[RMDB]
RNA sequence: GGGAACGACUCGAGUAGAGUCGAAAAGAGCGGAGUGAAAUAGAACCUGAAACCGUAUGUCUACAAAGUGUCAGAGCAGAGCAAUCUGCGAUGGCGUGCCUUUUGUUUAAUGAGUCUGCGAGUCAGUACACCUACUACCCUUCGGGGUAGUAGGUGUAAAAGAAACAACAACAACAAC
Reactivity to 2A3 in 0.01 (KOAc 150mM, MgCl2 10mM, bicine 150mM(pH8.5), 24C), signal-to-noise 2, nucleotides 027 to 126: g060a000g000c010g030g060a100g020u130g080a050a050a030u170a080g090a090a040c000c000u010g030a030a030a000c010c000g000u020a020u280g060u000c010u020a060c020a050a030a020g020u020g000u040c000a000g000a000g000c000a000g020a000g000c050a020a190u000c000u010g040c000g030a020u050g000g010c050g010u010g040c000c000u040u070u050u020g050u010u050u100a220a080u180g020a000g040u000c000u030g010c000g010a010g010u020c040a000g020u020
Reactivity to DMS in 0.01 (KOAc 150mM, MgCl2 10mM, bicine 150mM(pH8.5), 24C), signal-to-noise 1, nucleotides 027 to 126: g030a040g010c030g000g000a110g030u020g000a030a030a150u000a110g000a130a160c100c110u030g000a070a020a120c130c000g010u000a090u040g000u030c020u050a010c070a000a000a010g000u000g010u000c000a000g000a300g030c030a000g000a040g000c290a050a060u000c000u000g000c010g040a090u000g000g030c070g040u020g020c080c020u000u000u000u000g030u000u060u030a020a160u000g000a010g030u000c000u010g000c000g030a020g000u000c000a000g020u030

About this RNA
Chemical mapping of a 177-nucleotide RNA with 2A3 and DMS. The data come from the RNA Mapping Database (RMDB), library RFM100. Values are in units of 0.01, from 0 to 300, in steps of 10. The reactions ran in a buffer of 150 mM KOAc, 10 mM MgCl2 and 150 mM bicine (pH 8.5), at 24 C.